RNA sequence: GGGAACGACUCGAGUAGAGUCGAAAAGAUAUGGAUUCAGCAAUGACGGAUCGGGUCGGAAACGACCCAAUCUAAGACAGCUGAUCCUAAGUCAAAACGAUACAGGAGCUUCGGCUCCUGUAUCGAACGUACAUGGAAUGUUCGCAUUCCAUGUACGAAAAGAAACAACAACAACAAC
Reactivity to DMS in 0.01 (KOAc 150mM, MgCl2 10mM, bicine 150mM(pH8.5), 24C), signal-to-noise 5, nucleotides 027 to 126: g000a020u000a090u010g000g000a010u000u010c010a000g010c010a080a090u010g030a160c300g000g000a000u000c040g000g000g010u000c000g020g000a020a020a070c000g010a010c000c000c000a010a000u000c000u000a100a100g010a120c270a110g010c000u000g000a070u000c000c000u010a000a090g000u000c010a100a070a070a220c020g000a010u000a000c000a010g000g000a010g000c000u000u000c190g020g010c000u000c000c000u010g010u000a000u000c000g000a010a060
Reactivity to 2A3 in 0.01 (KOAc 150mM, MgCl2 10mM, bicine 150mM(pH8.5), 24C), signal-to-noise 6, nucleotides 027 to 126: g010a000u020a010u060g020g010a030u250u300c020a000g000c050a130a300u300g080a150c250g010g000a000u020c030g000g020g000u010c000g000g010a020a000a000c010g000a010c010c000c000a000a000u000c010u070a110a080g110a020c010a020g000c000u010g000a000u000c000c000u000a020a000g000u000c010a010a010a100a150c020g000a000u000a000c000a010g030g000a010g010c020u120u250c300g110g000c000u010c000c010u000g000u000a000u000c000g000a000a000

Chemical mapping of a 177-nucleotide RNA with DMS and 2A3. Source: RMDB library TTRDEL, as collected in RNAgym. The DMS profile rests on 5,930 reads. 2A3 adducts were read by reverse transcription with SuperScript II with manganese.